[RMDB]
RNA sequence: GGGAACGACUCGAGUAGAGUCGAAAAGUCUAAUUGAGACGAAUCAAUUUUUUCAAGUACAUUUUUGAUGGCUUCAUUAUGAAGAACAGCUUUCAUUUUUACUUGAGUCCAGCCUUUUGCUUGCUGACAGAUGGUAAGGAUUCGUCCUUACCAUCUGAAAAGAAACAACAACAACAAC
Reactivity to DMS in 0.01 (KOAc 150mM, MgCl2 10mM, bicine 150mM(pH8.5), 24C), signal-to-noise 2, nucleotides 027 to 126: g000u000c040u000a070a080u000u000g010a050g020a080c090g000a110a110u000c030a030a010u000u010u020u010u010u000c040a030a060g000u000a070c130a040u000u000u000u000u010g010a020u000g010g000c010u000u000c050a080u010u020a220u000g000a050a070g010a090a100c190a080g010c050u000u000u000c020a030u000u000u000u000u000a010c010u000u000g000a010g000u000c070c180a100g010c030c070u000u000u000u000g010c110u000u000g010c050u010g000a260
Reactivity to 2A3 in 0.01 (KOAc 150mM, MgCl2 10mM, bicine 150mM(pH8.5), 24C), signal-to-noise 4, nucleotides 027 to 126: g010u030c020u050a050a100u080u080g090a040g010a060c140g130a040a050u040c030a020a000u020u070u080u090u090u040c030a030a010g000u050a080c020a190u060u060u090u120u150g020a020u010g030g000c010u070u010c050a100u030u300a130u300g090a050a080g040a110a030c020a050g020c010u030u030u030c000a030u000u010u040u100u060a010c010u000u010g010a010g030u020c040c000a020g010c010c020u080u190u050u120g040c060u060u050g040c010u010g020a030